The record gives the reactivity of an RNA of 177 nucleotides to 2A3 and DMS.
RNA sequence: GGGAACGACUCGAGUAGAGUCGAAAAUCUCCAGCUCCCUCUCCAACGCUGCGAUCCUCUCCAUGAGUUCCAACACGAGGGGCUGGUUCACCUCCGGUACUGAACUCGCAGCUGUGACAGCAGUACACGUCGAUAAAAUAUUCGUAUUUUAUCGACGAAAAGAAACAACAACAACAAC
Reactivity to 2A3 in 0.01 (KOAc 150mM, MgCl2 10mM, bicine 150mM(pH8.5), 24C), signal-to-noise 5, nucleotides 027 to 126: u030c010u000c000c010a010g010c030u230c020c020c000u020c010u020c040c020a050a040c050g010c030u020g000c020g030a080u100c010c020u020c010u020c070c030a090u150g010a010g020u050u050c020c020a060a020c060a040c150g010a010g020g000g010g000c010u020g010g000u050u090c060a110c020c010u060c040c040g060g000u020a010c020u020g030a090a020c010u010c040g000c020a050g000c040u100g040u050g040a040c050a030g030c010a000g040u020a010c050a020
Reactivity to DMS in 0.01 (KOAc 150mM, MgCl2 10mM, bicine 150mM(pH8.5), 24C), signal-to-noise 9, nucleotides 027 to 126: u010c080u010c000c020a030g000c020u010c010c000c010u000c000u000c110c100a120a100c140g000c010u000g030c040g010a100u010c140c040u000c030u010c100c110a090u010g010a090g010u000u000c060c060a090a100c130a110c160g000a030g000g010g000g020c030u000g010g000u000u000c080a130c050c020u000c090c080g010g020u000a020c030u000g000a070a110c090u000c020g010c030a060g010c030u000g010u000g000a100c140a110g000c020a030g010u000a030c070a300
For 2A3 the reverse transcriptase was SuperScript II with manganese. The DMS profile rests on 12,286 reads. The reactions ran in a buffer of 150 mM KOAc, 10 mM MgCl2 and 150 mM bicine (pH 8.5), at 24 C. It was measured as part of the RMDB library OK2TST.